Background
Conditions: 150 mM KOAc, 10 mM MgCl2 and 150 mM bicine (pH 8.5), 24 C. The record gives the reactivity of an RNA of 207 nucleotides to DMS and 2A3. For 2A3, 2,526 sequencing reads were counted. It was measured as part of the RMDB library OK3TST.
RNA sequence: GGGAACGACUCGAGUAGAGUCGAAAAAAAAAGCAAGCUAUGAACAGGCAGCAAAUUCAGUGGCUCAGAUUGACACUGAACUGAGCUACCACCCUAAGGAAGAGCUUAGGUGGAAUAGGGCAGAAUAAAUAAGAUGUGAAAUGGGAAUAACAUUUGACCAUAGGUAUGCUUUCGAGCAUACCUAUGGAAAAGAAACAACAACAACAAC
Reactivity to DMS in 0.01 (KOAc 150mM, MgCl2 10mM, bicine 150mM(pH8.5), 24C), signal-to-noise 2, nucleotides 027 to 156: a030a010a070a060a040g000c040a130a070g000c060u000a040u000g030a050a040c070a110g020g030c020a000g050c020a060a050a070u000u000c000a040g030u000g010g010c010u000c000a220g000a200u000u010g000a090c020a030c010u020g000a050a050c020u000g010a120g000c000u000a070c000c000a050c040c000c040u000a000a050g020g010a090a090g010a120g000c010u010u000a030g050g010u000g000g000a090a110u020a050g010g010g030c030a110g010a060a090u000a040a080a120u000a090a070g010a040u000g010u000g010a050a030a060u010g000g010g000a070a070u000a040a080c050a110u000u000u010g000a190
Reactivity to 2A3 in 0.01 (KOAc 150mM, MgCl2 10mM, bicine 150mM(pH8.5), 24C), signal-to-noise 4, nucleotides 027 to 156: a000a000a000a010a020g070c050a050a030g010c020u080a040u190g030a090a060c060a070g020g020c010a000g020c010a050a010a030u120u030c010a020g010u010g040g000c000u000c060a060g080a300u110u150g020a080c050a010c090u050g010a020a010c050u020g000a010g020c000u010a030c000c000a020c030c020c020u020a020a000g040g020a060a050g020a000g050c000u070u040a030g000g040u030g010g060a050a070u070a090g000g010g000c000a010g030a110a020u040a090a050a020u130a040a040g040a030u060g020u040g100a030a070a070u060g020g020g030a040a050u080a110a010c030a070u000u040u120g080a070

Source information
Values are in units of 0.01, from 0 to 300, in steps of 10.